[RMDB]
RNA sequence: GGGAACGACUCGAGUAGAGUCGAAAAGAAAGAAUGCCCUUUUGACAGCUAGGAAAUUGAGGCUGAGACAAGUGAAGUGUCUUGCCCUGGUUUCCCAGCUAGUGAGUGUCUGUGCUGGAUUCAAACUUAGCUCUUAUGCUCCAGCCUUCAAGUGGGGAGUACACGUGAGAUUCGUCUCACGUGUACUAAAAGAAACAACAACAACAAC
Reactivity to 2A3 in 0.01 (KOAc 150mM, MgCl2 10mM, bicine 150mM(pH8.5), 24C), signal-to-noise 4, nucleotides 027 to 156: g120a010a100a000g070a050a070u180g040c010c000c000u110u040u010u070g040a020c000a000g010c000u000a010g000g020a000a040a020u010u070g120a100g000g030c140u130g060a010g000a010c010a000a100g110u180g300a190a090g150u040g060u050c000u000u010g000c020c010c010u010g010g010u000u010u000c000c000c010a000g000c000u070a030g020u090g040a040g010u070g040u040c050u120g070u110g050c000u000g020g040a080u200u170c130a060a090a120c080u080u170a070g020c000u010c010u120u180a100u220g000c000u000c000c000a010g010c050c000u060u040c060a110a050g040u180g080g000g000g010
Reactivity to DMS in 0.01 (KOAc 150mM, MgCl2 10mM, bicine 150mM(pH8.5), 24C), signal-to-noise 1, nucleotides 027 to 156: g000a180a050a050g000a100a090u020g030c030c000c040u000u000u000u000g000a090c070a060g030c000u020a010g050g010a020a030a040u010u010g020a020g000g040c000u000g000a040g010a000c010a020a200g020u010g030a140a200g020u000g000u000c000u000u000g000c030c000c030u010g020g020u010u000u010c000c030c020a020g040c000u010a010g030u000g010a080g030u000g010u000c040u000g030u000g000c020u020g000g010a110u000u010c140a070a090a070c110u000u000a070g020c000u010c040u000u000a050u000g030c130u000c010c000a060g000c030c010u000u000c120a060a080g030u000g010g020g000g000
The record gives the reactivity of an RNA of 207 nucleotides to 2A3 and DMS. The reactions ran in a buffer of 150 mM KOAc, 10 mM MgCl2 and 150 mM bicine (pH 8.5), at 24 C. DMS adducts were read by reverse transcription with MarathonRT. The 2A3 profile rests on 2,159 reads.